[RMDB]
RNA sequence: GGGAACGACUCGAGUAGAGUCGAAAACUGGGUUCUCCUUCAUAGCGCGCUGUCCGUUCUCGCUCGCCACAUCCAUCUCGAUAAUGUGGUCCUUCUGAAUCAUGAUAGUGCCAUGCAGGCAUUUCACCUUGCCUUCAUAAUCGGUGCAUCCAUGAGCACGCAUGGUUAAAUUCGUUUAACCAUGCGUAAAAGAAACAACAACAACAAC
Reactivity to DMS in 0.01 (KOAc 150mM, MgCl2 10mM, bicine 150mM(pH8.5), 24C), signal-to-noise 2, nucleotides 027 to 156: c030u000g000g000g030u000u000c030u000c030c040u000u010c050a110u000a060g000c060g020c040g060c030u000g040u000c020c020g050u000u010c010u010c020g000c040u020c040g000c000c010a020c010a060u000c040c030a080u010c090u000c080g000a140u000a040a030u000g020u010g000g030u000c050c050u000u000c060u010g010a070a070u000c030a060u010g000a090u000a080g030u000g010c010c020a140u010g000c080a080g010g020c020a050u000u000u000c070a130c060c060u010u000g000c010c010u000u010c020a080u000a080a080u000c080g060g010u000g010c030a150u000c070c030a050u000g000a090g050c170
Reactivity to 2A3 in 0.01 (KOAc 150mM, MgCl2 10mM, bicine 150mM(pH8.5), 24C), signal-to-noise 8, nucleotides 027 to 156: c040u040g030g020g010u070u070c060u030c020c010u090u100c060a130u100a090g030c060g000c000g010c060u030g040u030c030c030g020u040u020c030u020c030g040c020u070c040g000c020c000a020c010a030u010c090c010a160u060c070u070c140g120a130u120a190a040u090g010u010g020g030u030c020c030u090u090c040u080g080a100a090u040c020a030u060g030a020u020a070g010u010g000c000c000a010u020g020c030a010g030g000c010a010u050u130u140c080a100c050c010u040u030g000c010c000u020u020c020a050u050a210a130u160c080g010g000u010g000c010a020u010c080c000a010u060g020a010g030c050
Source: RMDB library OK3TST, as collected in RNAgym. Structure probing data (DMS and 2A3) for a 207-nucleotide construct. Reactivities are given for positions 27 through 156. The 2A3 profile rests on 7,752 reads. The reactions ran in a buffer of 150 mM KOAc, 10 mM MgCl2 and 150 mM bicine (pH 8.5), at 24 C.